Chemical mapping of a 207-nucleotide RNA with DMS and 2A3.
RNA sequence: GGGAACGACUCGAGUAGAGUCGAAAAGGGCGGUUCGCCGCCCCCAGGCGCGUACUACAAGACAUGCGACCCCACAACAUCGAUCUUCUCCCAAAUAGGAGAAGGGAGUUGUGAACUCGCAACAGCUUGUAUCGCAAAACGUCAGCUUCGGCUGAAAACUAUAGUUUAGAUUCGUCUAAACUAUAGUAAAAGAAACAACAACAACAAC
Reactivity to DMS in 0.01 (KOAc 150mM, MgCl2 10mM, bicine 150mM(pH8.5), 24C), signal-to-noise 2, nucleotides 027 to 156: g000g030g040c000g030g010u000u010c150g030c000c010g000c000c000c000c000c000a130g040g020c080g040c050g030u030a090c040u010a020c000a000a030g020a060c080a300u010g020c020g010a060c020c070c070c030a030c030a040a010c000a260u000c220g020a080u010c000u010u000c000u000c000c000c020a060a170a200u000a050g010g010a030g010a020a020g020g000g000a090g040u000u020g000u010g000a090a100c090u000c030g020c030a030a090c040a190g000c000u020u010g010u000a020u000c050g000c030a040a060a100a060c040g000u000c000a100g010c000u000u000c230g040g020c030u010g000a030a040a100
Reactivity to 2A3 in 0.01 (KOAc 150mM, MgCl2 10mM, bicine 150mM(pH8.5), 24C), signal-to-noise 6, nucleotides 027 to 156: g030g000g000c040g020g050u070u130c220g060c080c000g010c000c000c000c000c000a060g160g090c100g000c020g060u100a120c030u000a000c030a030a000g030a070c040a100u040g000c000g010a030c050c010c070c000a000c000a000a000c000a190u300c030g150a130u010c020u000u000c000u040c000c030c010a180a300a180u300a190g000g000a010g000a000a010g000g010g000a040g000u000u010g000u010g010a010a020c020u000c000g000c010a020a070c020a180g030c000u000u000g010u030a020u300c010g000c000a040a080a020a030c040g060u010c010a010g000c000u070u110c190g120g000c000u010g000a060a040a000

About this RNA: Source: RMDB library RNAMAK, as collected in RNAgym.